[RMDB]
RNA sequence: GGGAACGACUCGAGUAGAGUCGAAAACGGGGUUUCUUGCCUUGGUGUACUGGAAGAAUCGGAUCAGUUGUGGGCUUGGAGAAUAAGUGUAAGUUUGUUUUUUAAAGAAGAAAAAGAAAAAUAAAAACAGCUUACAUGCGUUCGCGUAUGUGAGCUGAAAAGAAACAACAACAACAAC
Reactivity to 2A3 in 0.01 (KOAc 150mM, MgCl2 10mM, bicine 150mM(pH8.5), 24C), signal-to-noise 7, nucleotides 027 to 126: c050g000g010g010g000u050u070u020c020u030u080g030c010c010u030u070g100g000u100g030u050a060c040u040g010g040a060a020g020a040a080u080c070g030g020a030u040c040a050g030u030u030g040u140g040g010g000c020u030u060g050g020a090g040a110a080u230a170a050g030u040g020u070a100a100g020u040u030u060g030u020u020u020u010u050u110a160a130a040g070a050a040g090a040a140a030a060a010g230a030a150a020a010a000u170a030a070a000a010a010
Reactivity to DMS in 0.01 (KOAc 150mM, MgCl2 10mM, bicine 150mM(pH8.5), 24C), signal-to-noise 6, nucleotides 027 to 126: c130g000g000g010g010u000u010u010c030u000u000g000c060c030u000u010g010g030u020g000u030a050c070u000g000g000a060a060g020a070a040u010c050g000g010a060u020c100a080g020u030u000g020u010g000g000g010c060u020u000g010g000a110g020a050a060u030a050a110g020u010g010u000a060a070g010u020u010u010g010u000u000u000u000u000u010a040a090a140g010a100a120g010a040a060a040a060a120g020a030a040a030a050a090u030a040a030a060a070a140
Source information
Structure probing data (2A3 and DMS) for a 177-nucleotide construct. Reactivities are given for positions 27 through 126. The 2A3 profile rests on 5,073 reads. The reactions ran in a buffer of 150 mM KOAc, 10 mM MgCl2 and 150 mM bicine (pH 8.5), at 24 C.